[RMDB]
RNA sequence: GGGAACGACUCGAGUAGAGUCGAAAAAGGCAAACGUCAGCGGAUCGCCAUUGUAAAAGUGUUCGGAGUAGUCUCGGCGCUCCGCCGGUGACAGCGAGAAGAACCAGUGCGCCUUGUUGAUCGUCGCCAGUCCUUCUAAGUUCGCUUAGAAGGACUGAAAAGAAACAACAACAACAAC
Reactivity to 2A3 in 0.01 (KOAc 150mM, MgCl2 10mM, bicine 150mM(pH8.5), 24C), signal-to-noise 6, nucleotides 027 to 126: a010g140g000c070a130a050a010c030g020u020c010a010g010c020g050g020a060u080c020g010c010c010a090u090u170g170u120a100a110a100a070g160u170g090u090u070c030g050g030a080g030u220a050g060u050c030u010c070g030g000c030g010c070u060c040c050g000c010c000g000g030u080g000a010c010a020g020c040g030a060g030a130a040g020a020a000c030c010a030g060u010g050c040g000c010c020u010u070g020u040u030g040a110u080c060g050u020c010g060c040
Reactivity to DMS in 0.01 (KOAc 150mM, MgCl2 10mM, bicine 150mM(pH8.5), 24C), signal-to-noise 5, nucleotides 027 to 126: a010g000g030c020a060a130a060c060g010u020c020a060g020c000g000g000a070u010c030g010c040c040a100u030u010g010u050a060a060a080a110g000u040g010u010u010c040g030g010a150g010u010a120g010u010c010u010c020g010g010c010g010c190u030c050c010g010c020c010g010g010u030g010a050c050a190g010c020g000a100g010a140a080g000a080a060c040c080a070g000u020g000c130g000c050c040u000u000g000u000u000g000a080u010c050g000u000c090g010c100
Structure probing data (2A3 and DMS) for a 177-nucleotide construct. It was measured as part of the RMDB library OK1LIB.